[RMDB]
RNA sequence: GGGAACGACUCGAGUAGAGUCGAAAAACAGGGUUUUCACCCUUCCUUUCUUCGGGUUUCCUUCCUCUGCUUGCGGCCUCGCCCGGAGUCUUCGAAUCCAGCGCAGGUUCUGACGCGACCGGUGGCAUCACCGAGUUGCUCAAGCCUCAAUCCGCUUCACUUGUUGUAAGUUCGCUUACAACAAGUGAAAAGAAACAACAACAACAAC
Reactivity to 2A3 in 0.01 (KOAc 150mM, MgCl2 10mM, bicine 150mM(pH8.5), 24C), signal-to-noise 3, nucleotides 027 to 156: a000c110a060g020g000g040u110u120u240u300c180a060c010c000c000u020u050c020c000u070u110u040c020u020u030c020g090g000g030u000u080u100c030c010u040u100c010c040u080c040u040g060c040u070u080g030c060g010g030c000c010u050c060g010c020c010c030g050g000a020g010u030c060u070u100c080g120a130a090u010c040c040a040g060c020g020c110a000g020g000u040u040c070u030g010a030c110g000c000g000a000c000c000g010g010u020g070g090c130a210u300c000a200c000c000g050a130g110u010u000g010c000u000c010a000a010g000c000c010u040c020a040a090u020c020c040g020c000u020u020